The record gives the reactivity of an RNA of 177 nucleotides to DMS and 2A3.
RNA sequence: GGGAACGACUCGAGUAGAGUCGAAAAGAUAUGGACCCAUGGGGAGAGACCAUGAUCGGAAACGAUCACAUUUCUCGACGAUCCCGCUGGGUCCUAAGUCAAACUCAGAACCUUCGGGUUCUGAGAAGUUACGUGGAUCGUUCGCGAUCCACGUAACAAAAGAAACAACAACAACAAC
Reactivity to DMS in 0.01 (KOAc 150mM, MgCl2 10mM, bicine 150mM(pH8.5), 24C), signal-to-noise 2, nucleotides 027 to 126: g000a030u000a090u010g030g000a000c000c000c000a030u020g000g000g010g010a030g030a010g000a050c300c290a200u000g000a000u000c000g020g030a010a040a110c000g000a000u010c010a010c300a150u000u000u000c070u000c020g000a130c240g000a080u000c000c000c020g000c150u010g000g010g000u000c000c000u000a010a070g010u000c020a050a170a090c000u000c000a000g000a000a010c000c000u020u010c230g030g010g010u000u010c000u000g010a000g000a030a040
Reactivity to 2A3 in 0.01 (KOAc 150mM, MgCl2 10mM, bicine 150mM(pH8.5), 24C), signal-to-noise 1, nucleotides 027 to 126: g000a000u030a000u000g000g000a020c000c000c030a040u070g010g020g000g010a120g000a000g010a050c070c070a160u200g000a010u010c000g030g000a000a020a030c010g000a010u060c020a010c000a090u190u300u050c000u030c020g220a280c080g000a020u000c040c030c040g140c250u030g020g020g000u020c000c000u010a000a000g000u000c010a030a010a090c000u000c010a000g000a000a010c010c000u060u180c300g180g020g000u030u000c000u010g000a000g000a010a010
Reactivities are rounded to 0.1 and cut off at 0 and 3. Conditions: 150 mM KOAc, 10 mM MgCl2 and 150 mM bicine (pH 8.5), 24 C. For DMS, 991 sequencing reads were counted.